[RMDB]
RNA sequence: GGGAACGACUCGAGUAGAGUCGAAAAGGCAAUUACUUCGGUAAUUGCCAUAUAAACUUGAGAAAAGAAGGGCGGAACUCAAGAAAAUUGCGAAAUAAACAAACAACGAGAGCUUCGGCUCUCGUAAGCCUUAUAAAACGUUCGCGUUUUAUAAGGCAAAAGAAACAACAACAACAAC
Reactivity to 2A3 in 0.01 (KOAc 150mM, MgCl2 10mM, bicine 150mM(pH8.5), 24C), signal-to-noise 2, nucleotides 027 to 126: g020g020c000a010a010u010u010a010c010u040u080c200g010g010u010a000a000u000u000g020c000c000a000u010a000u000a000a000a000c000u010u010g020a000g050a060a150a010a010g090a040a050g040g040g010c070g000g040a040a020c000u000c000a000a040g050a070a120a020a020u130u180g060c040g080a080a030a120u180a090a170a020c070a020a090a010c020a040a010c010g000a000g010a000g000c000u040u040c190g060g000c000u010c000u000c000g000u010a000a000
Reactivity to DMS in 0.01 (KOAc 150mM, MgCl2 10mM, bicine 150mM(pH8.5), 24C), signal-to-noise 1, nucleotides 027 to 126: g020g000c000a000a020u000u010a000c010u000u040c140g010g030u000a000a020u000u000g000c010c000a040u000a070u000a090a090a150c000u000u020g020a040g000a140a010a120a220g000a110a080g000g000g030c000g020g010a100a130c000u000c010a010a010g000a110a070a050a030u000u000g000c050g020a090a060a010u000a070a100a040c120a110a030a070c210a140a010c020g020a000g000a010g000c010u000u030c230g000g000c000u010c000u000c000g010u000a000a050
Structure probing data (2A3 and DMS) for a 177-nucleotide construct.
2A3 is a SHAPE reagent: it acylates the 2'-hydroxyl of flexible nucleotides of all four kinds.
Source: RMDB library M2PK50, as collected in RNAgym.